[RMDB]
RNA sequence: GGGAACGACUCGAGUAGAGUCGAAAAGAAGCACUGGGAGCGAUUCAGGAGGUAACAAAUGAAUUGAAGUACUACCAGAAAAGGGCCGUGCAAAGCGGUCCAGCGAACCAUGCAGGCCGUAACGCGCGAACUGGAUUAAGUUCGCUUAAUCCAGUUCAAAAGAAACAACAACAACAAC
Reactivity to 2A3 in 0.01 (KOAc 150mM, MgCl2 10mM, bicine 150mM(pH8.5), 24C), signal-to-noise 2, nucleotides 027 to 126: g040a060a010g000c020a000c030u000g020g010g000a020g020c010g000a010u030u020c010a010g030g010a020g040g000u110a110a040c000a010a030a040u040g000a010a020u040u020g030a080a010g070u070a020c020u020a030c010c010a010g040a020a060a010a010g000g010g000c010c030g010u060g040c100a250a050a000g020c000g000g000u000c000c000a000g010c000g020a020a050c010c010a020u100g020c040a060g060g000c010c030g060u090a070a040c040g030c010g020c070
Reactivity to DMS in 0.01 (KOAc 150mM, MgCl2 10mM, bicine 150mM(pH8.5), 24C), signal-to-noise 5, nucleotides 027 to 126: g010a110a190g010c030a160c020u010g000g000g010a060g020c030g010a030u010u000c020a040g010g000a300g010g010u010a040a080c030a010a240a140u000g010a020a020u010u000g010a090a110g000u010a120c040u000a060c020c010a040g000a050a050a130a080g010g000g000c000c000g010u000g000c150a060a110a180g000c010g010g000u000c010c000a030g010c050g010a080a100c080c040a040u010g010c060a090g000g000c060c040g010u020a040a070c120g010c120g030c120